[RMDB]
RNA sequence: GGGAACGACUCGAGUAGAGUCGAAAACACAUGCUCAUGGCGGAUCUAGCUACAUGGACAUGCAGUCAUGGUGUCGACUAGCUAGCUAGGUACGAUCAGCUCAGUCGAUCGCUGCGCUAUACAUGGCGCCAUGCAAUCCAUUCGUGGAUUGCAUGGCAAAAGAAACAACAACAACAAC
Reactivity to DMS in 0.01 (KOAc 150mM, MgCl2 10mM, bicine 150mM(pH8.5), 24C), signal-to-noise 3, nucleotides 027 to 126: c090a160c030a010u000g010c070u040c110a060u000g000g040c000g000g010a040u000c020u000a010g010c000u000a040c030a080u010g020g010a020c050a030u000g040c060a070g010u020c300a060u000g000g020u010g000u000c020g000a100c070u010a070g000c150u000a020g010c040u000a030g000g040u010a040c080g000a090u000c110a070g020c010u000c130a040g010u010c070g000a040u000c130g010c080u000g000c080g040c020u000a100u010a140c050a040u000g000g010c110
Reactivity to 2A3 in 0.01 (KOAc 150mM, MgCl2 10mM, bicine 150mM(pH8.5), 24C), signal-to-noise 4, nucleotides 027 to 126: c070a010c000a040u090g000c010u030c070a010u030g050g000c010g000g010a030u000c010u020a010g000c020u010a020c000a050u080g110g020a010c010a020u140g130c030a130g110u150c040a120u180g040g000u030g010u010c010g030a160c030u030a040g030c000u000a010g010c010u010a010g020g050u080a030c010g050a140u090c040a010g010c000u000c080a040g060u070c010g100a140u110c020g010c080u110g000c010g000c050u070a040u030a180c040a030u050g020g010c040

Overview:
An RNA of 177 nucleotides, treated with DMS and 2A3 and read out base by base. For DMS the reverse transcriptase was MarathonRT. It was measured as part of the RMDB library OK2TRN. The RNA was probed in 150 mM KOAc, 10 mM MgCl2 and 150 mM bicine (pH 8.5) at 24 C.